[RMDB]
RNA sequence: GGGAACGACUCGAGUAGAGUCGAAAAUUCAGUGAUGAAGAUGGUAUCCGUGCUGCUGAACUUGAAGGUGAAUUUGCAGAAAUGAAUGGUUGGAAUGCUGAAGCUGAUGCUGCUAACCUUUUAUCUGGUGUUAUCCUGAAUUCGUUCAGGAUAACACAAAAGAAACAACAACAACAAC
Reactivity to 2A3 in 0.01 (KOAc 150mM, MgCl2 10mM, bicine 150mM(pH8.5), 24C), signal-to-noise 3, nucleotides 027 to 126: u070u020c020a020g040u030g140a100u060g040a080a040g040a060u090g000g090u020a070u040c030c060g020u020g010c010u040g000c010u010g010a030a040c020u050u110g050a090a000g100g000u020g050a050a090u060u040u140g010c040a000g090a060a060a020u150g040a070a010u060g000g070u060u030g040g050a090a070u100g000c010u050g070a080a030g010c040u030g010a050u090g000c020u010g000c010u020a030a030c000c000u000u010u040u040a160u020c060u040g070
Reactivity to DMS in 0.01 (KOAc 150mM, MgCl2 10mM, bicine 150mM(pH8.5), 24C), signal-to-noise 4, nucleotides 027 to 126: u000u000c030a060g030u010g010a100u000g020a050a040g000a110u010g020g020u000a120u000c040c050g010u000g020c020u000g010c020u010g010a060a080c080u000u000g000a070a090g020g020u010g010a090a100u000u000u010g020c040a050g000a060a100a080u000g010a060a060u000g000g000u010u000g000g010a060a060u000g020c040u000g010a110a100g010c100u010g000a110u010g010c030u000g000c050u000a050a070c020c020u000u010u000u010a090u010c060u000g020